An RNA of 177 nucleotides, treated with DMS and read out base by base. The DMS profile rests on 801 reads. Conditions: 150 mM KOAc, 10 mM MgCl2 and 150 mM bicine (pH 8.5), 24 C. Values cover nucleotides 27 to 126. For DMS the reverse transcriptase was MarathonRT.

RNA sequence: GGGAACGACUCGAGUAGAGUCGAAAACAUGCACUCUGUGAGCAUAGAUGUUCUAAGGCGGUUACUAGCAGGAACAGAUACUGGAAUAACAUGCCUCCCUGUCUGUGAAAUGCUGUUACAUAUGAUAAUUACUCGGGCGAUUCGUCGCCCGAGUAAUAAAAGAAACAACAACAACAAC
Reactivity to DMS in 0.01 (KOAc 150mM, MgCl2 10mM, bicine 150mM(pH8.5), 24C), signal-to-noise 1, nucleotides 027 to 126: c070a040u010g020c110a110c050u000c040u020g020u000g060a070g000c060a080u000a050g000a020u000g010u030u000c080u000a100a100g010g020c040g070g000u000u000a100c050u000a050g040c010a050g020g020a160a050c090a010g010a030u010a020c100u010g010g010a120a040u000a080a100c240a140u010g020c020c050u010c040c060c180u000g000u000c010u020g010u000g020a120a230a090u020g010c010u000g010u000u000a050c080a080u000a010u000g000a130u000a050